An RNA of 177 nucleotides, treated with DMS and 2A3 and read out base by base. The DMS profile rests on 1,086 reads. For 2A3, 3,218 sequencing reads were counted. The RNA was probed in 150 mM KOAc, 10 mM MgCl2 and 150 mM bicine (pH 8.5) at 24 C. Source: RMDB library M2PK50, as collected in RNAgym. Reactivities are given for positions 27 through 126.
RNA sequence: GGGAACGACUCGAGUAGAGUCGAAAACUUUGAACGUUCGCGUUCAAAGAAACCUCUAAGCAGAUUGCCGAGGACGACGCUGCGGAGCGCGUUUGCCAAUAAAAAGCGUAGGCUUCGGCCUACGCAACCUGUGCAGAUAGUUCGCUAUCUGCACAGGAAAAGAAACAACAACAACAAC
Reactivity to DMS in 0.01 (KOAc 150mM, MgCl2 10mM, bicine 150mM(pH8.5), 24C), signal-to-noise 2, nucleotides 027 to 126: c010u000u000u000g010a000a000c010g040u000u000c180g020c020g020u000u000c000a000a000a010g010a090a170a130c010c000u000c040u010a150a140g020c000a160g000a170u010u010g010c040c060g000a040g000g020a300c030g010a000c020g000c010u000g000c000g000g030a010g000c050g020c010g020u000u010u000g010c000c020a100a090u010a070a110a090a060a080g010c020g010u000a000g010g010c000u000u010c190g040g000c000c000u010a000c000g030c010a030a030
Reactivity to 2A3 in 0.01 (KOAc 150mM, MgCl2 10mM, bicine 150mM(pH8.5), 24C), signal-to-noise 3, nucleotides 027 to 126: c000u020u000u000g010a010a000c010g020u060u050c230g010c010g080u010u010c030a000a010a000g000a060a020a010c000c010u000c030u060a090a030g020c020a060g170a300u240u240g020c000c020g020a020g020g010a020c020g000a000c010g000c030u080g030c020g040g010a010g020c270g000c000g030u000u000u050g280c010c020a040a050u180a080a110a020a020a000g000c000g000u000a000g010g000c000u000u050c150g090g000c000c000u000a000c000g000c000a000a010